[RMDB]
RNA sequence: GGGAACGACUCGAGUAGAGUCGAAAAAAAAGAGGUGGAGGAGGAGGAAAGCAUAUCGGACAAAAAAAGAGAACUAGAGCUUAAUAAUACGGAAAUAUCUCAGAAGCCUAAACGCUCUCGUUGGGAUCAGGCUCCACCUAGCGUUACGCAGGUUUCAGAGUAAAUUAGUAUUCGUACUAAUUUACUCAAAAGAAACAACAACAACAAC
Reactivity to 2A3 in 0.01 (KOAc 150mM, MgCl2 10mM, bicine 150mM(pH8.5), 24C), signal-to-noise 2, nucleotides 027 to 156: a000a000a050a000g070a020g010g000u030g000g010a010g030g000a000g010g000a030g010g050a090a030a000g070c090a030u090a060u240c120g060g010a070c110a040a160a000a000a010a010a000g030a010g000a060a010c030u040a000g000a000g060c010u140u120a090a020u080a110a000u070a130c000g000g040a110a100a090u150a050u030c120u010c070a080g070a200a030g000c000c000u070a080a070a000c020g030c010u030c000u020c010g040u030u050g000g040g020a080u090c070a050g050g020c010u010c000c000a000c000c010u010a020g030c000g110u110u070a070c080g000c060a050g110g000u040u040u030c010a000